[RMDB]
RNA sequence: GGGAACGACUCGAGUAGAGUCGAAAAUUACUCUUGUAAGGUGAAAGUUGAUGGUCGCCGAGCCAGUCCGUACAUCCAAAAAGGACUCUAUGUAGUAGGAAGUCGAGAGCCUAUGAGAGUUAGAGUCAUGCCUAUUUUGUGUUCGCACAAAAUAGAACUACGUGUACUACUUCGGUAGUACACGUAGAAAAGAAACAACAACAACAAC
Reactivity to 2A3 in 0.01 (KOAc 150mM, MgCl2 10mM, bicine 150mM(pH8.5), 24C), signal-to-noise 3, nucleotides 027 to 156: u090u020a060c000u000c020u060u100g060u060a040a120g020g020u030g060a140a070a100g100u110u090g090a080u050g060g020u020c020g030c130c020g010a010g000c010c030a020g080u010c040c020g000u010a040c020a080u000c030c040a080a090a000a020a010g090g000a000c000u010c000u020a060u050g080u040a060g020u000a000g050g010a070a020g030u070c070g060a030g010a000g180c000c000u030a040u040g020a020g000a010g100u030u050a010g000a010g000u020c030a020u180g060c010c000u000a000u000u000u000u000g020u000g010u040u090c200g010c070a000c020a000a000a000a000u010a000g000a010a030
Reactivity to DMS in 0.01 (KOAc 150mM, MgCl2 10mM, bicine 150mM(pH8.5), 24C), signal-to-noise 2, nucleotides 027 to 156: u000u000a060c030u010c030u000u010g020u000a130a060g010g000u000g010a070a120a220g000u000u000g010a060u000g000g000u000c010g040c060c030g000a170g000c000c010a120g010u000c040c060g030u010a100c070a100u000c090c070a010a080a100a130a110g000g000a040c010u000c050u000a080u000g000u000a240g020u000a030g000g010a030a100g020u000c110g010a200g000a240g030c020c010u000a050u000g000a170g010a170g010u000u020a040g010a130g010u000c010a080u000g020c070c000u000a020u010u010u000u000g010u000g010u000u000c300g030c010a010c010a010a000a020a040u000a000g010a050a140

The record gives the reactivity of an RNA of 207 nucleotides to 2A3 and DMS. As a SHAPE reagent, 2A3 marks flexible, mostly unpaired nucleotides at the ribose 2'-OH. For DMS the reverse transcriptase was MarathonRT. Reactivities are given for positions 27 through 156. Conditions: 150 mM KOAc, 10 mM MgCl2 and 150 mM bicine (pH 8.5), 24 C. The data come from the RNA Mapping Database (RMDB), library M2RFPK. For DMS, 3,247 sequencing reads were counted.